The record gives the reactivity of an RNA of 207 nucleotides to 2A3. For 2A3, 1,089 sequencing reads were counted. Conditions: 150 mM KOAc, 10 mM MgCl2 and 150 mM bicine (pH 8.5), 24 C. The data come from the RNA Mapping Database (RMDB), library OK3TST.

RNA sequence: GGGAACGACUCGAGUAGAGUCGAAAAGUAAUAGAUAACUGGAUGCAGCGUAGGGGUCAACGCAUAUCCAGUACGAAUGGUACCUGUAAAUAAAAUAUGAUUCCUAGUACAAGUACCAACAGAAGGAUAAGCGAUGGUGAUGUCAAUCACAUUUGCACGAUAGGUGACCAUUCGUGGUCACCUAUCGAAAAGAAACAACAACAACAAC
Reactivity to 2A3 in 0.01 (KOAc 150mM, MgCl2 10mM, bicine 150mM(pH8.5), 24C), signal-to-noise 2, nucleotides 027 to 156: g030u070a020a130u040a160g050a150u070a120a080c010u020g000g000a010u050g120c180a060g000c140g000u040a090g080g010g010g010u000c030a020a030c000g000c000a000u000a000u150c000c000a000g020u000a000c000g080a090a150u080g000g000u030a010c020c020u010g000u020a000a070a120u110a030a080a020a050u230a060u130g100a040u080u000c000c000u040a010g010u000a040c000a000a040g000u000a000c030c000a050a000c010a030g160a090a020g040g050a070u080a190a010g010c000g040a000u030g050g050u030g010a080u020g040u130c080a100a050u020c000a040c000a090u120u180u160g090c070a040